[RMDB]
The record gives the reactivity of an RNA of 207 nucleotides to 2A3.
RNA sequence: GGGAACGACUCGAGUAGAGUCGAAAAGCCAUGUGACUUUUGUCGCAUGGCGACGACGGAGUUUUCUCCGUCGGAUAUCAGCCAUCCGCUAGCCCGGGAUGGCCUAUCUGCCGAACAUGCUUUUUAGCUUGUGAGGUAGUUAGUGCUUGGGGCGUCAAUGAUUAGGGUGGUUCGCCACCCUAAUCAUAAAAGAAACAACAACAACAAC
Reactivity to 2A3 in 0.01 (KOAc 150mM, MgCl2 10mM, bicine 150mM(pH8.5), 24C), signal-to-noise 1, nucleotides 027 to 156: g040c000c000a000u000g000u010g000a000c030u070u060u240u300g000u000c000g010c000a000u000g000g020c000g000a010c000g000a000c010g040g030a030g000u080u100u270u210c020u000c010c000g020u000c010g000g000a060u060a050u130c060a000g000c000c000a000u000c000c000g030c090u040a020g000c000c020c040g000g000g000a000u000g000g030c000c000u000a000u020c000u000g020c000c000g000a010a000c000a000u000g010c000u110u250u050u110u300a000g000c000u000u000g000u000g010a030g000g000u000a000g010u000u000a000g000u030g090c050u150u230g040g010g000g000c020g050u080c100a020
2A3 adducts were read by reverse transcription with SuperScript II with manganese.